[RMDB]
RNA sequence: GGGAACGACUCGAGUAGAGUCGAAAAGGGGUCUAACGGGAGUGGCAUACUAAGCUUGGAUUUAUGGAGCUGAAGCCUCCACGGCUCCAUUGUCAGCUUAGUGCCACGAAGAACGUUAGACGGAGGCACCCAAAAGUUCGCUGUUCGCAGCGAACAACGACCAUUGUAUCUUCGGAUACAAUGGUCGAAAAGAAACAACAACAACAAC
Reactivity to 2A3 in 0.01 (KOAc 150mM, MgCl2 10mM, bicine 150mM(pH8.5), 24C), signal-to-noise 1, nucleotides 027 to 156: g070g010g030g000u000c000u000a000a000c040g020g010g010a020g010u000g020g000c030a050u070a160c030u000a010a000g050c020u250u300g150g030a100u190u230u070a010u040g000g000a000g000c000u000g020a040a000g000c000c000u030c010c010a010c000g010g000c010u020c010c000a000u010u020g080u090c080a040g000c000u000u000a020g000u000g010c000c000a020c000g000a000a000g000a000a000c000g010u000u000a000g000a000c000g000g000a000g010g000c000a080c000c010c000a020a110a010a010g010u000u010c010g000c000u020g040u040u100c290g020c090a010g000c000g000a000a000c010a000a000
This 207-nucleotide RNA was probed chemically with 2A3. The reactions ran in a buffer of 150 mM KOAc, 10 mM MgCl2 and 150 mM bicine (pH 8.5), at 24 C. The 2A3 profile rests on 1,763 reads. For 2A3 the reverse transcriptase was SuperScript II with manganese.